Source: RMDB library OK1LIB, as collected in RNAgym. An RNA of 177 nucleotides, treated with DMS and 2A3 and read out base by base. The RNA was probed in 150 mM KOAc, 10 mM MgCl2 and 150 mM bicine (pH 8.5) at 24 C. For DMS, 1,631 sequencing reads were counted. Values cover nucleotides 27 to 126. DMS adducts were read by reverse transcription with MarathonRT. In probing experiments dimethyl sulfate is read out at A N1 and C N3, which are open when not base-paired. Reactivities are rounded to 0.1 and cut off at 0 and 3.
[RMDB]
RNA sequence: GGGAACGACUCGAGUAGAGUCGAAAAAGUACUGUAUUACCUAAAUUGUCGGUCUCGUUCAAAUAGUCACCGUGUCUGAGUAAAAGUUUAAUGAUAUCGAUGUUUAUAUAAUUUCGUAACAUAUAACCUGAUCUUUCCAGUUCGCUGGAAAGAUCAGAAAAGAAACAACAACAACAAC
Reactivity to DMS in 0.01 (KOAc 150mM, MgCl2 10mM, bicine 150mM(pH8.5), 24C), signal-to-noise 1, nucleotides 027 to 126: a100g000u010a080c120u010g000u010a070u000u000a010c060c000u020a010a060a060u080u040g020u030c000g030g000u000c010u000c000g010u000u010c170a030a010a140u010a110g020u000c040a000c000c000g000u000g000u000c100u000g000a120g010u060a100a090a050a050g020u000u000u010a100a110u030g010a020u020a030u040c020g000a010u040g000u010u000u030a030u000a030u010a010a010u020u000u000c040g020u060a080a060c070a070u000a100u000a100a050c150
Reactivity to 2A3 in 0.01 (KOAc 150mM, MgCl2 10mM, bicine 150mM(pH8.5), 24C), signal-to-noise 3, nucleotides 027 to 126: a000g060u020a010c030u020g110u090a160u050u070a180c040c010u060a130a120a060u100u140g010u000c010g000g000u000c000u000c000g040u040u000c080a050a050a020u120a060g080u090c050a020c050c000g070u040g020u080c070u070g080a050g020u170a120a120a150a060g040u050u010u010a090a100u050g050a010u000a000u070c030g010a020u020g060u030u080u040a190u020a080u030a100a080u020u100u250c110g000u030a100a060c050a020u090a040u060a110a030c030